RNA sequence: GGGAACGACUCGAGUAGAGUCGAAAAAGUGAGCCAAGAAUUGAACAUAGAGCUUGGCCUUCUCCUCACUGAUAACUGUCUUAGGACCACCAAUGUUCUGCAUUGCCAUCACAAUGUAUUUCUGACAGGUAUGCAGAACCCUGAAUUUAACAUCAAGCGCCUUGUAUAUUUUCGAAUAUACAAGGCGAAAAGAAACAACAACAACAAC
Reactivity to 2A3 in 0.01 (KOAc 150mM, MgCl2 10mM, bicine 150mM(pH8.5), 24C), signal-to-noise 5, nucleotides 027 to 156: a010g090u070g020a000g010c020c000a000a010g010a030a130u220u230g060a170a040c090a110u180a080g130a040g090c000u010u000g000g000c010c000u070u010c000u000c000c000u060c010a050c030u050g040a070u080a210a100c060u070g050u080c030u040u140a090g000g070a030c020c020a030c030c040a110a150u190g010u010u010c000u010g050c000a010u010u190g030c010c000a050u080c020a020c040a090a060u180g080u240a200u140u190u050c030u000g010a020c030a130g010g000u010a010u030g000c000a000g010a010a010c000c000c010u070g060a090a110u140u180u200a180a040c050a070u170c080a060a020g190
Reactivity to DMS in 0.01 (KOAc 150mM, MgCl2 10mM, bicine 150mM(pH8.5), 24C), signal-to-noise 1, nucleotides 027 to 156: a020g040u000g010a080g000c030c020a060a060g020a150a200u000u010g040a080a150c090a220u010a160g000a110g000c020u000u000g020g000c030c050u000u010c010u000c000c020u010c020a220c080u010g030a120u000a020a130c080u000g000u010c050u000u000a110g000g000a150c020c030a150c120c050a110a150u010g010u010u020c030u010g020c000a020u020u010g060c000c020a080u000c040a000c040a040a060u020g010u000a120u000u000u000c050u010g010a040c050a010g010g000u000a010u050g000c030a040g000a020a070c000c070c020u000g000a080a090u010u010u010a070a160c100a130u010c030a070a130g000
Structure probing data (2A3 and DMS) for a 207-nucleotide construct. The reactions ran in a buffer of 150 mM KOAc, 10 mM MgCl2 and 150 mM bicine (pH 8.5), at 24 C. For 2A3, 2,167 sequencing reads were counted. For 2A3 the reverse transcriptase was SuperScript II with manganese. DMS adducts were read by reverse transcription with MarathonRT.